An RNA of 177 nucleotides, treated with 2A3 and DMS and read out base by base.
For 2A3 the reverse transcriptase was SuperScript II with manganese.
The reactions ran in a buffer of 150 mM KOAc, 10 mM MgCl2 and 150 mM bicine (pH 8.5), at 24 C.
2A3 is a SHAPE reagent: it acylates the 2'-hydroxyl of flexible nucleotides of all four kinds.

[RMDB]
RNA sequence: GGGAACGACUCGAGUAGAGUCGAAAAGAAAGAAAAAGAAAUCAUCAAAUGAGGUCAAACGUCAGAAUUUCGGGCGUAAAUGCGACAUUAUGCAGAAAGCCGACCUCGAUGUCGUUUAGAAAGAAAAGGACCGCAUUAUAUUCGUAUAAUGCGGUCCAAAAGAAACAACAACAACAAC
Reactivity to 2A3 in 0.01 (KOAc 150mM, MgCl2 10mM, bicine 150mM(pH8.5), 24C), signal-to-noise 1, nucleotides 027 to 126: g000a000a050a000g010a000a010a000a000a000g150a000a220a000u200c040a000u000c110a190a060a160u060g070a070g000g030u010c010a120a160a000c050g020u000c000a000g030a220a120u070u220u130c000g000g040g000c000g010u010a000a090a000u100g000c000g060a000c000a040u000u050a000u140g070c070a080g060a100a020a000g050c070c020g000a000c000c000u000c000g000a010u040g000u000c090g000u000u000u000a090g050a090a030a010g130a020a020a020a010
Reactivity to DMS in 0.01 (KOAc 150mM, MgCl2 10mM, bicine 150mM(pH8.5), 24C), signal-to-noise 1, nucleotides 027 to 126: g000a080a120a080g000a050a060a000a130a010g000a030a090a040u000c050a010u000c090a150a170a150u080g010a000g010g060u000c030a040a150a000c220g000u000c030a050g000a010a130u000u040u000c030g010g000g000c000g030u000a030a120a190u000g000c010g000a160c130a050u080u000a020u010g000c030a000g000a090a170a090g000c100c050g000a010c060c000u000c000g040a120u060g000u000c000g000u000u000u040a150g000a010a120a130g000a110a040a120a040